[RMDB]
RNA sequence: GGGAACGACUCGAGUAGAGUCGAAAACUUGAGCUCAGCAGUUCAAGCCCAGCCUGGGUUGGUCUUUGAGAAAGCAAGACUCUGUCUCAAAAAAGUGUGGCCUGAAAGCUGAGUGUUUGACAAAAAGCCUUACCUUUCUAUUCGUAGAAAGGUAAGGAAAAGAAACAACAACAACAAC
Reactivity to DMS in 0.01 (KOAc 150mM, MgCl2 10mM, bicine 150mM(pH8.5), 24C), signal-to-noise 6, nucleotides 027 to 126: c030u000u010g020a200g010c000u010c010a030g000c020a100g020u000u000c010a010a070g010c010c000c010a080g010c080c050u000g000g000g020u000u000g010g010u000c040u000u010u000g010a110g010a090a090a120g000c090a070a070g010a130c060u000c100u000g010u010c010u010c020a000a030a070a100a050a100g010u010g020u010g030g010c000c020u000g000a020a120a080g000c010u000g000a030g010u000g010u000u010u000g000a060c130a050a050a140a100a080g010
Reactivity to 2A3 in 0.01 (KOAc 150mM, MgCl2 10mM, bicine 150mM(pH8.5), 24C), signal-to-noise 4, nucleotides 027 to 126: c020u090u140g090a020g010c000u010c010a010g000c020a160g040u030u020c010a020a000g000c010c000c000a050g070c020c040u120g030g080g000u090u080g020g010u020c020u030u050u080g080a110g080a120a090a010g120c090a080a010g030a050c010u000c050u180g130u040c000u000c000a150a180a030a020a020a040g130u100g050u150g100g000c000c000u020g020a010a010a000g010c000u000g020a040g010u030g030u030u140u110g060a030c040a000a100a020a020a010g010
Conditions: 150 mM KOAc, 10 mM MgCl2 and 150 mM bicine (pH 8.5), 24 C. This 177-nucleotide RNA was probed chemically with DMS and 2A3. 2A3 adducts were read by reverse transcription with SuperScript II with manganese. Source: RMDB library OK2TRN, as collected in RNAgym. For DMS, 8,115 sequencing reads were counted. The 2A3 profile rests on 5,805 reads.